[RMDB]
RNA sequence: GGGAACGACUCGAGUAGAGUCGAAAAGGGAAUAGUGGUUUACCCCGUUAUCAAAUGAUUACCGACCAAUAAUUGGCGAAACUCGUUUCGCGUUGGCUGCCUAAUUCAAGGAAUUAGCGUGCCUUCAAAGACAUCAAGAAGUUCGCUUCUUGAUGAACCAUUGUUGGUUGUUCGCAACCAACAAUGGAAAAGAAACAACAACAACAAC
Reactivity to DMS in 0.01 (KOAc 150mM, MgCl2 10mM, bicine 150mM(pH8.5), 24C), signal-to-noise 1, nucleotides 027 to 156: g040g010g030a070a070u000a040g050u000g010g020u000u000u010a170c010c000c000c080g030u020u000a110u000c010a050a100a130u000g000a200u000u000a050c010c000g080a090c010c010a090a140u010a050a110u000u000g040g000c030g010a060a030a130c050u000c100g010u000u000u000c010g040c040g010u000u000g020g040c040u000g000c130c000u020a000a060u010u000c030a150a180g000g040a040a010u010u000a030g010c030g000u000g020c020c000u000u000c030a100a050a070g000a160c010a030u000c000a000a010g010a050a020g070u000u000c270g000c010u000u000c000u000u000g000a000u000g010a000a090
Reactivity to 2A3 in 0.01 (KOAc 150mM, MgCl2 10mM, bicine 150mM(pH8.5), 24C), signal-to-noise 3, nucleotides 027 to 156: g060g010g030a090a070u130a060g080u070g130g000u060u110u230a110c000c020c000c000g020u040u070a080u110c090a070a050a290u200g020a070u090u060a050c050c020g050a070c030c060a050a030u200a190a100u120u160g060g040c010g060a030a030a020c100u110c140g110u020u020u010c000g020c000g010u010u050g020g010c010u040g040c030c000u020a020a020u020u010c070a140a090g150g040a080a000u000u000a000g010c020g050u020g020c010c010u000u020c030a080a080a000g050a060c000a000u010c000a000a000g010a000a000g020u010u130c170g040c080u000u020c000u000u000g000a000u000g010a000a000